[RMDB]
RNA sequence: GGGAACGACUCGAGUAGAGUCGAAAAGAUCGCCGACCACUGGUUUGUCGACAGGCCCGAGCUGAUCGGCGCGGAUGGCGUGCAUCCCAACGAUGCGGGACAUGAGUAUCUGGCGGACAAGAUCGCGUCCGCACAGUUCAUUCGUGAACUGUGCGGAAAAAGAAACAACAACAACAAC
Reactivity to DMS in 0.01 (KOAc 150mM, MgCl2 10mM, bicine 150mM(pH8.5), 24C), signal-to-noise 2, nucleotides 027 to 126: g000a080u010c060g030c000c030g010a090c010c010a160c120u020g010g000u000u010u020g050u010c030g010a080c080a050g020g010c010c020c100g000a160g020c080u000g000a040u000c010g020g010c060g050c060g000g000a090u010g010g010c030g020u000g010c100a100u010c010c030c070a130a170c160g020a050u000g020c110g000g010g000a100c070a050u020g000a100g000u000a050u020c040u000g010g030c000g000g000a070c090a060a100g020a110u010c090g000c150g000
Reactivity to 2A3 in 0.01 (KOAc 150mM, MgCl2 10mM, bicine 150mM(pH8.5), 24C), signal-to-noise 2, nucleotides 027 to 126: g000a140u010c040g050c010c030g090a150c050c030a120c180u110g080g000u060u100u150g070u080c030g010a050c030a010g070g040c010c000c040g050a040g000c010u050g040a180u010c010g030g000c050g000c000g070g000a140u050g030g040c030g000u060g020c020a120u020c010c000c000a000a030c090g080a030u080g040c050g010g000g000a000c020a040u150g000a060g030u100a070u070c040u080g100g060c020g000g040a040c000a010a010g010a120u080c040g020c050g080